An RNA of 177 nucleotides, treated with 2A3 and DMS and read out base by base.
RNA sequence: GGGAACGACUCGAGUAGAGUCGAAAACGGAGACUGUUCGCAGUCUCCGAAAGCAGCGCGCUUUUGCGCUAAGGCCAUACGGACAGCCGGCUCCAAAGCCGAAAAUCCGGCGGUUCGCCGCCGGAAACCUAUUUCACUACUUCGGUAGUGAAAUAGGAAAAGAAACAACAACAACAAC
Reactivity to 2A3 in 0.01 (KOAc 150mM, MgCl2 10mM, bicine 150mM(pH8.5), 24C), signal-to-noise 2, nucleotides 027 to 126: c010g020g000a010g010a000c020u030g040u080u110c210g010c120a000g000u000c000u000c000c000g000a000a000a000g010c050a010g020c010g000c010g030c060u060u090u300u300g000c010g030c010u040a040a050g040g000c000c000a060u080a110c030g010g020a020c010a020g070c030c030g030g010c010u050c050c030a050a020a010g000c010c010g060a080a010a000a050u000c010c000g010g020c020g010g000u010u030c180g010c040c000g000c030c000g030g000a030a000a000
Reactivity to DMS in 0.01 (KOAc 150mM, MgCl2 10mM, bicine 150mM(pH8.5), 24C), signal-to-noise 2, nucleotides 027 to 126: c040g010g000a030g020a010c000u000g000u010u040c190g040c010a010g000u000c000u000c000c000g000a030a030a050g020c100a030g000c020g010c010g000c250u000u020u000u000g010c000g000c010u000a030a100g010g030c010c030a040u010a080c060g000g010a050c050a130g010c060c020g020g040c040u010c030c060a070a080a170g030c020c030g010a190a040a070a100u000c000c020g000g010c000g000g010u000u020c210g010c010c010g010c010c000g010g010a000a030a060
Values cover nucleotides 27 to 126. The data come from the RNA Mapping Database (RMDB), library M2PK50.